The record gives the reactivity of an RNA of 177 nucleotides to DMS and 2A3. 2A3 adducts were read by reverse transcription with SuperScript II with manganese. It was measured as part of the RMDB library OK1LIB. The RNA was probed in 150 mM KOAc, 10 mM MgCl2 and 150 mM bicine (pH 8.5) at 24 C. The 2A3 profile rests on 11,830 reads. For DMS the reverse transcriptase was MarathonRT.
RNA sequence: GGGAACGACUCGAGUAGAGUCGAAAACACGUUUGGUCUGAUCGUAUAAAGUUGAGAUCUCCAUUCAUCCUGGGUGCUUGUCUGACGACUUCGAUAGGCAUAGCUAUCGUCCUUGGUUCUCAAGUUCGGUACUGAUACUGUUCGCAGUAUCAGUACCAAAAGAAACAACAACAACAAC
Reactivity to DMS in 0.01 (KOAc 150mM, MgCl2 10mM, bicine 150mM(pH8.5), 24C), signal-to-noise 3, nucleotides 027 to 126: c120a080c090g000u000u010u020g000g010u060c110u030g010a090u000c030g000u050a080u030a100a130a100g010u020u030g020a130g000a070u000c020u000c040c020a100u020u010c060a080u000c000c010u010g020g010g040u010g000c010u000u010g010u010c060u030g020a110c120g000a080c070u000u000c020g010a060u000a020g000g000c070a050u010a100g000c000u000a010u030c030g000u010c060c050u000u010g000g000u000u010c000u000c040a030a120g030u020u020c090
Reactivity to 2A3 in 0.01 (KOAc 150mM, MgCl2 10mM, bicine 150mM(pH8.5), 24C), signal-to-noise 9, nucleotides 027 to 126: c110a020c060g020u010u050u050g040g030u040c120u100g050a060u030c030g050u140a090u100a200a250a150g080u130u120g090a060g000a090u010c010u000c020c010a030u030u040c020a030u040c000c010u010g010g010g040u060g010c030u070u060g040u030c020u050g070a070c070g020a090c020u080u050c080g050a050u040a040g040g020c100a110u120a080g030c010u030a020u080c020g050u030c020c010u040u060g030g000u070u000c020u000c030a080a110g060u110u120c060